[RMDB]
Conditions: 150 mM KOAc, 10 mM MgCl2 and 150 mM bicine (pH 8.5), 24 C. Chemical mapping of a 170-nucleotide RNA with DMS and 2A3. In probing experiments dimethyl sulfate is read out at A N1 and C N3, which are open when not base-paired. Source: RMDB library 15KLIB, as collected in RNAgym. DMS adducts were read by reverse transcription with MarathonRT.
RNA sequence: GGGAACGACUCGAGUAGAGUCGAAAAGUGAUCCUGCCUCUCCUUGUCGGUGAAUCCUCCCCUGAGGGGCCUCUUUCCAGGUCCGGAGUCUACUUCCAUCUGGACCACCCGGGCCUUCUUCGCCGGGAACGAGCAGCGUUCGCGCUGCUCAAAAGAAACAACAACAACAAC
Reactivity to DMS in 0.01 (KOAc 150mM, MgCl2 10mM, bicine 150mM(pH8.5), 24C), signal-to-noise 4, nucleotides 027 to 129: g000u040g050a000u000c090c030u000g000c050c020u030c050u020c060c030u030u040g000u030c020g060g010u040g000a110a120u030c020c020u020c030c080c010c040u040g030a160g000g040g030g090c000c030u000c080u040u060u030c110c070a140g000g000u040c030c030g010g010a000g000u000c090u020a130c160u000u000c020c010a100u050c100u030g020g000a120c000c040a070c170c040c000g010g000g110c000c000u050u050c030u000u000c080g000c020c000g040g030g020a100a080c090
Reactivity to 2A3 in 0.01 (KOAc 150mM, MgCl2 10mM, bicine 150mM(pH8.5), 24C), signal-to-noise 4, nucleotides 027 to 129: g100u060g020a060u040c000c000u030g030c020c020u030c020u020c000c050u060u060g220u150c030g000g020u070g080a070a090u120c000c010u030c020c020c020c020u020g020a040g000g010g010g030c000c000u050c000u010u080u020c080c050a040g000g010u000c000c000g040g000a020g030u000c020u090a100c020u240u050c100c020a130u050c020u060g000g000a000c000c020a090c000c000c000g000g000g000c020c000u090u030c000u040u030c020g030c010c010g000g000g030a070a070c040